[RMDB]
RNA sequence: GGGAACGACUCGAGUAGAGUCGAAAAGAUAUGGACCUGCGAUAAGCUGGACUCGGAAACGAGUCCCAGCUUUUGACGCAGUGUCCUAAGUCAAAGUUCGCAUUGCAGUUCGCUGCAAUGCGAACAACCAUCUCUAAAGCUUCGGCUUUAGAGAUGGAAAAGAAACAACAACAACAAC
Reactivity to 2A3 in 0.01 (KOAc 150mM, MgCl2 10mM, bicine 150mM(pH8.5), 24C), signal-to-noise 1, nucleotides 027 to 126: g020a030u090a040u080g000g000a000c000c000u010g020c030g080a090u020a100a080g000c000u010g000g010a010c000u010c000g050g020a090a070a050c020g000a000g020u010c040c000c000a000g000c000u040u020u040u070g050a010c000g040c010a010g040u070g010u100c000c000u020a100a010g020u020c040a130a120a000g000u000u010c000g000c010a000u000u020g000c000a020g000u030u120c190g150c210u000g000c000a010a000u010g000c010g000a000a000c000a010a000
Reactivity to DMS in 0.01 (KOAc 150mM, MgCl2 10mM, bicine 150mM(pH8.5), 24C), signal-to-noise 2, nucleotides 027 to 126: g000a060u000a300u010g000g000a020c000c020u010g000c020g010a130u000a030a060g010c000u000g000g000a040c000u000c000g040g000a040a070a170c080g000a020g000u000c110c030c040a000g000c000u000u000u000u000g020a170c020g010c000a010g000u010g000u000c010c000u000a010a080g000u010c040a070a090a170g010u000u010c000g020c010a010u010u000g020c010a000g010u000u030c130g000c010u000g010c010a000a000u000g000c010g000a010a010c010a050a140
This 177-nucleotide RNA was probed chemically with 2A3 and DMS. 2A3 adducts were read by reverse transcription with SuperScript II with manganese. The 2A3 profile rests on 3,339 reads. Reactivities are given for positions 27 through 126. It was measured as part of the RMDB library TTRDEL.